[RMDB]
This 177-nucleotide RNA was probed chemically with DMS and 2A3.

RNA sequence: GGGAACGACUCGAGUAGAGUCGAAAAAUGUGUUAAACAUCAAUGUGUCAAAUGUCUCUCAGCUUCUUAGAGGAACUGUAGGACAUGUGAUGGAAUUGUCAAAACUCUAUGGAAGCAGCAAUGUGAACAUGGCAUAAGCAUUCGUGCUUAUGCCAUGAAAAGAAACAACAACAACAAC
Reactivity to DMS in 0.01 (KOAc 150mM, MgCl2 10mM, bicine 150mM(pH8.5), 24C), signal-to-noise 4, nucleotides 027 to 126: a070u000g020u000g010u020u010a090a110a060c030a020u000c060a060a060u000g020u010g000u000c020a040a070a030u000g000u000c010u000c050u000c040a050g010c040u000u000c010u000u010a120g010a150g000g010a040a030c080u010g020u000a120g000g000a010c000a000u000g010u010g000a080u000g010g000a110a030u000u000g000u000c110a040a080a050a090c030u000c020u000a040u010g020g020a060a050g010c020a070g010c120a060a060u000g020u020g000a110a170
Reactivity to 2A3 in 0.01 (KOAc 150mM, MgCl2 10mM, bicine 150mM(pH8.5), 24C), signal-to-noise 3, nucleotides 027 to 126: a020u080g030u030g030u080u060a160a110a000c020a020u080c000a000a100u050g090u030g030u120c020a020a040a080u040g040u010c020u010c000u000c100a020g010c070u020u020c020u080u190a130g030a060g180g040a040a020c050u040g040u160a040g000g030a000c010a000u010g030u010g010a040u060g000g110a100a040u030u000g020u010c010a020a040a020a060c010u000c010u030a090u110g070g010a040a010g000c000a000g010c050a030a090u160g040u050g080a040a010
Values are in units of 0.01, from 0 to 300, in steps of 10. The data come from the RNA Mapping Database (RMDB), library OK2TST.